[RMDB]
Record summary: An RNA of 177 nucleotides, treated with DMS and 2A3 and read out base by base.
RNA sequence: GGGAACGACUCGAGUAGAGUCGAAAAGAUAUGGAGACCAGGGAGCUGGGUGUCGGAAACGACACCACAGCAUCGAUCUGGUUCUCCUAAGUCAAAACAUUCGCCACACUUCGGUGUGGCGAAUGAACACCUAAUCUACGUUCGCGUAGAUUAGGUGAAAAGAAACAACAACAACAAC
Reactivity to DMS in 0.01 (KOAc 150mM, MgCl2 10mM, bicine 150mM(pH8.5), 24C), signal-to-noise 4, nucleotides 027 to 126: g000a010u000a010u000g000g010a030g000a050c000c000a010g010g010g000a010g040c000u010g010g010g020u000g020u000c000g010g010a000a000a010c010g000a020c000a000c000c000a020c000a010g020c000a240u000c190g000a110u010c000u000g000g000u000u010c000u000c000c000u000a000a070g000u000c000a110a080a130a230c010a010u000u000c000g000c000c010a000c000a000c000u000u000c190g030g020u000g020u000g000g000c000g000a000a000u000g000a100a160
Reactivity to 2A3 in 0.01 (KOAc 150mM, MgCl2 10mM, bicine 150mM(pH8.5), 24C), signal-to-noise 2, nucleotides 027 to 126: g000a000u020a010u050g000g000a010g000a000c000c010a000g020g000g000a010g000c010u010g010g020g010u000g010u000c000g000g000a030a010a000c010g010a000c000a000c000c030a070c010a010g010c010a010u140c000g000a000u000c010u000g010g000u170u060c000u000c000c000u000a000a010g010u000c010a010a030a060a100c000a000u000u000c000g000c010c010a020c000a010c020u040u130c300g180g000u010g000u000g000g000c000g000a000a000u000g000a000a000
The DMS profile rests on 5,823 reads. The RNA was probed in 150 mM KOAc, 10 mM MgCl2 and 150 mM bicine (pH 8.5) at 24 C. DMS adducts were read by reverse transcription with MarathonRT.